[RMDB]
RNA sequence: GGGAACGACUCGAGUAGAGUCGAAAAAAGAUGUUCGGGCUCUGUGUCUGUUGGGCUGGCCAGAAAGUAUCGUAUCGGAGGAUGGCUUGGGAAGCACUAGCUGUGGAGAGAAUGCUGCGAAAUGACAUAAUAAAUCAGGGUUCGCCCUGAUUUAUUAAAAAGAAACAACAACAACAAC
Reactivity to DMS in 0.01 (KOAc 150mM, MgCl2 10mM, bicine 150mM(pH8.5), 24C), signal-to-noise 5, nucleotides 027 to 126: a090a060g000a080u010g000u010u000c070g020g000g000c040u000c050u000g020u010g020u000c040u000g020u000u000g010g010g000c040u000g000g010c050c030a070g000a060a070a080g010u000a050u010c070g000u010a080u000c100g010g010a090g010g010a080u000g010g020c050u010u010g020g010g000a090a080g010c050a090c080u000a060g020c060u000g010u000g010g010a070g000a080g010a090a070u000g020c020u010g010c060g010a050a070a070u000g000a100c180a120
Reactivity to 2A3 in 0.01 (KOAc 150mM, MgCl2 10mM, bicine 150mM(pH8.5), 24C), signal-to-noise 1, nucleotides 027 to 126: a000a050g060a030u060g010u100u060c030g000g010g060c000u000c000u090g130u050g060u040c040u030g140u090u090g060g020g000c050u010g020g030c000c000a000g070a030a110a000g050u070a060u130c050g060u050a040u110c120g050g020a010g020g000a060u040g040g010c050u040u060g040g020g000a030a020g010c000a020c080u030a010g050c030u040g050u100g050g000a000g000a010g010a080a050u100g030c010u040g000c000g000a040a040a130u130g000a040c010a070
The record gives the reactivity of an RNA of 177 nucleotides to DMS and 2A3. In probing experiments dimethyl sulfate is read out at A N1 and C N3, which are open when not base-paired. DMS adducts were read by reverse transcription with MarathonRT. For DMS, 6,514 sequencing reads were counted. Conditions: 150 mM KOAc, 10 mM MgCl2 and 150 mM bicine (pH 8.5), 24 C. Source: RMDB library OK2TST, as collected in RNAgym.